[RMDB]
Structure probing data (2A3) for a 207-nucleotide construct. The reactions ran in a buffer of 150 mM KOAc, 10 mM MgCl2 and 150 mM bicine (pH 8.5), at 24 C.

RNA sequence: GGGAACGACUCGAGUAGAGUCGAAAAGAAAGAAAGAAAGAACUCUGUAAAGUGAGGCAUUGCCUGGACCAGGUCGGCGGGCCUGCUCCAGUUUCCUUCGCUCUGCUCAACGGGCAGACCGCCACAAAAAACGCGUGGCUGUUCGCAGCCACGCGAACCUAUGCUACCUGUUCGCAGGUAGCAUAGGAAAAGAAACAACAACAACAAC
Reactivity to 2A3 in 0.01 (KOAc 150mM, MgCl2 10mM, bicine 150mM(pH8.5), 24C), signal-to-noise 1, nucleotides 027 to 156: g030a000a100a000g030a040a070a020g070a000a120a020g070a060a020c020u030c000u010g100u190a160a120a030g030u040g060a020g040g000c020a060u010u140g050c000c010u010g000g010a000c010c010a000g030g010u040c090g010g030c000g000g010g010c000c010u000g000c030u000c000c000a000g010u000u010u040c020c000u020u040c090g020c050u020c010u030g000c000u010c060a060a130c070g040g030g000c000a020g000a060c010c000g040c000c000a040c030a020a190a020a010a010a010c010g000c010g000u000g000g030c040u010g050u070u060c230g050c050a000g000c000c000a000c020g040c010g030a000a000